[RMDB]
RNA sequence: GGGAACGACUCGAGUAGAGUCGAAAACAAGGCUCUUCGGAGCCUUGAAAAAGGGGUCACGGCACUGAACUACAGCGAUGAGAUACUGAAGCCUCCACGGUAUCGAGCUGCAAACCGUGACGGAGGCACCCAAAAAAGCCAUCGUUCGCGAUGGCAAUAGGAUUAUUUUCUUCGGAAAAUAAUCCUAAAAAGAAACAACAACAACAAC
Reactivity to 2A3 in 0.01 (KOAc 150mM, MgCl2 10mM, bicine 150mM(pH8.5), 24C), signal-to-noise 2, nucleotides 027 to 156: c010a000a010g000g010c010u010c020u050u240c300g090g000a000g000c000c000u000u000g000a000a000a000a000a000g080g010g020g000u000c010a000c000g010g020c110a040c170u130g080a250a060c110u270a130c220a020g010c000g240a280u060g020a040g010a020u020a010c000u010g060a120a020g010c000c000u000c000c000a000c010g000g010u000a000u000c000g000a020g000c010u090g040c050a000a000a120c000c000g000u000g000a000c000g000g000a010g000g000c010a050c000c010c010a080a100a010a030a000a010g010c050c010a000u070c000g050u050u060c170g030c010g080a000u000g000g000c000a000a000
Reactivity to DMS in 0.01 (KOAc 150mM, MgCl2 10mM, bicine 150mM(pH8.5), 24C), signal-to-noise 1, nucleotides 027 to 156: c020a000a030g040g030c000u000c020u000u030c300g000g010a040g000c000c000u010u010g010a010a030a030a110a090g030g040g110g010u010c000a020c010g030g060c000a180c170u000g000a220a240c030u000a060c010a020g000c000g010a280u010g010a240g020a040u020a030c000u000g030a010a150g010c060c030u000c040c020a240c040g000g010u000a010u000c010g000a040g010c000u000g000c010a080a100a110c020c020g000u010g000a010c000g040g030a030g230g090c000a130c010c020c060a010a040a070a150a050a210g010c020c000a000u000c020g010u000u000c300g050c030g000a030u000g000g010c010a000a010
The record gives the reactivity of an RNA of 207 nucleotides to 2A3 and DMS. Values cover nucleotides 27 to 156. For DMS the reverse transcriptase was MarathonRT. The 2A3 profile rests on 2,208 reads. Conditions: 150 mM KOAc, 10 mM MgCl2 and 150 mM bicine (pH 8.5), 24 C.